[RMDB]
RNA sequence: GGGAACGACUCGAGUAGAGUCGAAAAAAACAUCUUCAAAAGAUCAAGACCAACAAAGAAUUGAAUUGAAUGAGGAAAUAACACUUAAUGACUUGCUAGCUGAGGAUGAUAAUGACCAUGAUGCAGCUAAUAAUGCUACUGAAGAGGAAGAGGAUUAUCAGUAUGCAAUCUUCGGAUUGCAUACUGAAAAAGAAACAACAACAACAAC
Reactivity to DMS in 0.01 (KOAc 150mM, MgCl2 10mM, bicine 150mM(pH8.5), 24C), signal-to-noise 2, nucleotides 027 to 156: a110a030a040c020a040u010c030u020u000c050a050a070a100a100g010a050u000c050a100a080g020a230c040c010a080a120c080a060a100a100g020a120a130u010u000g000a120a070u000u010g010a010a120u000g000a050g000g010a040a030a090u000a050a050c060a040c050u000u010a050a100u000g000a050c050u000u000g040c050u000a040g000c050u010g020a060g010g010a060u010g030a070u000a050a080u000g010a060c060c030a060u000g010a130u020g020c040a010g000c060u010a040a050u000a060a030u000g010c030u000a060c070u000g000a050a040g000a080g000g020a050a030g010a080g000g020a080u020u000a100
Reactivity to 2A3 in 0.01 (KOAc 150mM, MgCl2 10mM, bicine 150mM(pH8.5), 24C), signal-to-noise 4, nucleotides 027 to 156: a000a010a000c070a020u040c020u050u050c020a090a090a050a060g030a050u040c010a030a030g040a080c040c040a010a120c100a070a130a070g060a070a090u080u130g020a060a060u090u050g020a080a040u110g000a030g030g070a000a020a100u130a080a020c060a000c060u070u090a040a050u150g080a050c010u010u070g030c060u070a090g040c020u010g020a010g030g020a030u040g020a010u080a120a100u080g060a030c030c040a010u060g010a010u060g030c010a010g020c020u010a020a000u060a090a020u160g030c030u040a070c050u030g040a050a010g020a020g000g040a040a000g000a010g050g000a010u100u000a030